[RMDB]
RNA sequence: GGGAACGACUCGAGUAGAGUCGAAAACUUCAUUUCUGGAGAGAUGAGCUUAGAGAGCAUGCAUUACCCAUCUUUAAAAAUUUCCAGAUAAUUGUAUGCAUCCAGCAACUUUGGACUAAGUCGGCAGGUCUUAGAAAACUUUCGAGUUUUCUAAGACAAAAGAAACAACAACAACAAC
Reactivity to 2A3 in 0.01 (KOAc 150mM, MgCl2 10mM, bicine 150mM(pH8.5), 24C), signal-to-noise 2, nucleotides 027 to 126: c000u100u050c000a060u060u020u000c010u040g050g030a070g000a010g020a070u060g020a010g030c000u060u100a060g010a010g000a010g150c000a000u050g000c000a080u020u150a110c010c000c000a030u030c060u030u150u090a170a180a090a080a130u080u170u000c000c010a010g010a120u090a000a070u140u090g030u030a120u010g000c000a020u000c000c010a000g030c000a080a080c050u120u130u060g000g050a010c020u070a030a020g050u000c020g050g000c010a000g080
Reactivity to DMS in 0.01 (KOAc 150mM, MgCl2 10mM, bicine 150mM(pH8.5), 24C), signal-to-noise 2, nucleotides 027 to 126: c040u020u000c080a050u000u010u000c020u010g010g020a040g000a060g020a050u000g000a120g000c090u000u000a060g000a100g010a120g030c060a020u000g010c050a060u010u010a120c010c040c020a060u010c060u000u010u000a030a060a090a160a130u000u010u000c020c010a030g000a040u000a040a070u000u010g020u000a050u000g030c020a130u000c040c010a040g000c120a070a030c120u000u010u000g020g010a110c100u000a040a070g010u000c060g000g020c140a090g000